[RMDB]
RNA sequence: GGGAACGACUCGAGUAGAGUCGAAAACGGUUUUACACACUGGUUUUGACCCAGUAACUCGCGGUCUAUUGCCAGAAGACAAGCGGUUGCAACUUAAAGACUACUUUAUCAAGCAGAUUAGGGCGUAGAGGUAGACCCAAUUCGUUGGGUCUACCUCAAAAGAAACAACAACAACAAC
Reactivity to DMS in 0.01 (KOAc 150mM, MgCl2 10mM, bicine 150mM(pH8.5), 24C), signal-to-noise 1, nucleotides 027 to 126: c020g000g020u000u000u010u020a080c240a160c300a030c000u000g010g000u000u000u000u000g010a050c090c010c020a130g020u000a090a040c130u040c030g040c170g000g020u000c010u000a170u010u000g030c000c070a180g010a100a090g020a050c090a070a090g010c070g010g010u000u000g040c020a050a130c050u000u000a030a050a100g020a130c120u000a080c050u000u000u000a110u000c090a050a090g000c000a040g020a080u000u000a120g000g010g040c060g010u010a080
Reactivity to 2A3 in 0.01 (KOAc 150mM, MgCl2 10mM, bicine 150mM(pH8.5), 24C), signal-to-noise 1, nucleotides 027 to 126: c010g070g000u000u000u090u120a040c070a000c010a010c050u090g120g000u000u020u010u040g040a020c000c000c010a020g010u020a030a050c000u000c200g020c020g040g000u070c020u000a060u050u260g000c050c020a110g120a160a010g050a010c060a140a100g000c020g100g000u000u080g000c080a220a100c000u100u260a200a050a000g080a070c000u030a050c020u110u110u090a100u160c040a000a060g060c030a000g050a110u060u140a080g050g020g090c020g000u010a040
Source: RMDB library OK2TST, as collected in RNAgym.
This 177-nucleotide RNA was probed chemically with DMS and 2A3.
For 2A3 the reverse transcriptase was SuperScript II with manganese.
The DMS profile rests on 628 reads.
The RNA was probed in 150 mM KOAc, 10 mM MgCl2 and 150 mM bicine (pH 8.5) at 24 C.